[RMDB]
RNA sequence: GGGAACGACUCGAGUAGAGUCGAAAAGAUAUGGAGUUUUCUCUUGGACCCAACGUAACAUCCUAUCGGAAACGAUAGGUGGUUGGCUAGAGGGACUCCUAAGUCAAAAGUACCCUUCGGGGUACAAUCAUUAAAGUAGGUUCGCCUACUUUAAUGAAAAAGAAACAACAACAACAAC
Reactivity to 2A3 in 0.01 (KOAc 150mM, MgCl2 10mM, bicine 150mM(pH8.5), 24C), signal-to-noise 3, nucleotides 027 to 126: g020a020u090a060u200g010g000a020g010u010u020u170u200c000u010c000u020u100g110g050a160c030c000c000a010a000c010g000u020a020a000c020a300u190c010c000u000a000u000c000g030g050a090a060a050c010g000a000u000a000g020g000u000g000g010u010u000g000g000c010u010a010g000a000g020g000g010a000c000u000c000c000u010a140a020g010u010c010a000a020a060a210g010u000a000c010c000c000u000u040c300g120g000g020g010u010a000c000a000a090
Reactivity to DMS in 0.01 (KOAc 150mM, MgCl2 10mM, bicine 150mM(pH8.5), 24C), signal-to-noise 8, nucleotides 027 to 126: g000a030u010a300u010g010g000a020g000u000u000u010u010c000u000c000u000u010g040g010a130c300c010c000a010a010c000g010u000a010a030c190a010u010c000c000u000a000u000c000g010g000a160a100a150c010g010a010u000a000g000g020u000g000g000u000u010g000g010c020u000a030g010a010g000g000g000a000c000u000c000c000u000a010a090g010u000c030a080a110a130a160g010u000a010c000c000c000u000u010c190g030g010g000g010u000a000c010a060a070
An RNA of 177 nucleotides, treated with 2A3 and DMS and read out base by base.
The reactions ran in a buffer of 150 mM KOAc, 10 mM MgCl2 and 150 mM bicine (pH 8.5), at 24 C.
Source: RMDB library TTRDEL, as collected in RNAgym.